[RMDB]
RNA sequence: GGGAACGACUCGAGUAGAGUCGAAAAUCCCCAAGAGGCCAAAUCCCCAGGGAGCUCAUGCUGUGGGGCUUUGAGCAAGCUCAUUACUGGCGCCAUUACUGCCCCGGUCGUCAUGUACGACCGGGGUACUAGCUUAUGAGUUCGCUCAUAAGCUAGUAAAAGAAACAACAACAACAAC
Reactivity to 2A3 in 0.01 (KOAc 150mM, MgCl2 10mM, bicine 150mM(pH8.5), 24C), signal-to-noise 9, nucleotides 027 to 126: u020c020c000c000c000a060a090g040a040g080g020c000c010a010a020a040u050c010c010c010c000a020g080g120g050a040g020c030u080c180a120u300g020c020u050g040u070g090g000g010g000c010u030u010u040g040a080g000c010a030a010g020c010u020c040a090u050u200a080c050u060g050g010c020g040c030c010a060u120u180a090c070u130g000c000c000c000c000g000g000u010c000g000u000c050a150u270g100u180a020c000g000a000c000c000g000g000g000g000u000
Reactivity to DMS in 0.01 (KOAc 150mM, MgCl2 10mM, bicine 150mM(pH8.5), 24C), signal-to-noise 5, nucleotides 027 to 126: u010c020c000c000c290a080a090g010a060g010g010c030c010a040a080a070u000c010c010c010c030a070g010g020g000a060g010c040u020c230a080u030g010c030u010g020u010g010g010g000g010c130u000u000u000g010a080g010c050a130a130g000c010u000c040a070u010u020a090c080u000g010g010c030g000c060c050a090u030u010a090c100u010g000c000c010c000c010g010g020u010c000g020u000c040a130u000g010u020a020c000g010a010c010c010g000g000g000g010u000
Chemical mapping of a 177-nucleotide RNA with 2A3 and DMS. It was measured as part of the RMDB libraries RFM100 and RFMREP.